[RMDB]
RNA sequence: GGGAACGACUCGAGUAGAGUCGAAAAGAAAGAGAAGGAACAAACCACAUGCUAUUGUUGAUGUCUGAGAAAUAGAUGAUUAGAAGCUGUCCUAAAUGGAGUUCUCUAGAAACAAAACCUGUGUGGGAGGAAGCAGGAUAGGUGGUGGGGAAAAGUAACGCACUAAUACGUUCGCGUAUUAGUGCGUAAAAGAAACAACAACAACAAC
Reactivity to 2A3 in 0.01 (KOAc 150mM, MgCl2 10mM, bicine 150mM(pH8.5), 24C), signal-to-noise 2, nucleotides 027 to 156: g010a000a040a010g010a000g010a060a000g060g020a080a070c070a040a060a020c050c010a020c040a040u100g040c030u080a030u160u060g000u020u100g030a090u050g050u000c100u060g030a010g030a030a070a020u160a050g060a050u060g010a040u070u070a020g040a040a000g020c040u040g000u030c010c010u040a100a100a110u170g000g010a020g030u080u000c010u000c000u040a020g080a010a080a020c080a030a050a040a060c040c000u050g040u050g050u040g070g020g000a030g010g000a040a000g020c040a010g020g010a040u110a080g080g000u070g000g020u060g000g000g010g000a000a010a090a000g090u160a010